[RMDB]
RNA sequence: GGGAACGACUCGAGUAGAGUCGAAAAGAUAUGGACUAAGUCAGGACAUGUCGUUAUUCGGAAACGAAUAGACGACAACAGCCUGCUUAGUCCUAAGUCAAAACAUGGAAGGUUCGCCUUCCAUGAACAUAAUGACACAGUUCGCUGUGUCAUUAUGAAAAGAAACAACAACAACAAC
Reactivity to DMS in 0.01 (KOAc 150mM, MgCl2 10mM, bicine 150mM(pH8.5), 24C), signal-to-noise 7, nucleotides 027 to 126: g000a020u000a060u010g000g000a030c010u000a000a010g000u020c040a010g020g010a040c100a090u010g020u000c000g020u000u000a010u000u000c000g010g000a020a010a040c000g010a010a000u010a040g020a020c010g000a010c000a050a060c160a200g000c000c000u000g000c000u000u000a010g010u010c000c000u000a000a050g000u000c010a130a080a130a250c010a000u000g000g000a020a000g000g020u000u010c300g010c010c000u000u000c000c000a000u000g000a070a190
Reactivity to 2A3 in 0.01 (KOAc 150mM, MgCl2 10mM, bicine 150mM(pH8.5), 24C), signal-to-noise 5, nucleotides 027 to 126: g000a000u020a010u050g000g000a000c000u010a000a010g070u300c130a010g040g000a080c120a300u130g000u010c000g000u010u000a000u010u010c010g000g010a010a010a010c010g010a010a010u060a090g300a150c000g020a010c010a070a040c100a130g020c000c000u000g000c000u010u000a000g000u000c000c000u000a000a000g000u000c010a010a000a080a160c010a010u000g000g000a000a010g030g030u110u250c300g200c040c000u000u000c000c000a000u000g000a010a000